[RMDB]
RNA sequence: GGGAACGACUCGAGUAGAGUCGAAAAAUCGCGCCUGGUCGGAACAUAACGACGGCGGGCCGGUGGGGAAUCAGGGGGCUACCGUGGGAUAGCGAUGAGACAGGCCCUCCGAUGGCACCAAGCGUCGCACACUGGCCAUACUUCGGUAUGGCCAGAAGACUCAAGCUAGUUUCGACUAGCUUGAGUCAAAAGAAACAACAACAACAAC
Reactivity to 2A3 in 0.01 (KOAc 150mM, MgCl2 10mM, bicine 150mM(pH8.5), 24C), signal-to-noise 1, nucleotides 027 to 156: a000u040c110g000c010g000c030c010u050g020g020u000c030g040g060a150a040c060a270u300a300a060c000g070a000c030g000g090c020g010g000g000c060c040g030g010u100g050g000g000g030a170a100u150c040a070g000g000g000g030g000c000u010a030c000c030g060u100g000g020g110a010u020a070g030c010g050a020u020g040a030g090a090c010a030g030g030c000c030c000u000c000c090g090a080u020g040g040c020a040c080c020a040a020g040c010g020u030c030g020c000a050c020a030c090u000g000g030c000c000a000u000a000c010u000u030c080g030g000u000a000u000g000g000c000c010a000g000a000a000
The data come from the RNA Mapping Database (RMDB), library M2RFPK.
Structure probing data (2A3) for a 207-nucleotide construct.
For 2A3, 499 sequencing reads were counted.
The RNA was probed in 150 mM KOAc, 10 mM MgCl2 and 150 mM bicine (pH 8.5) at 24 C.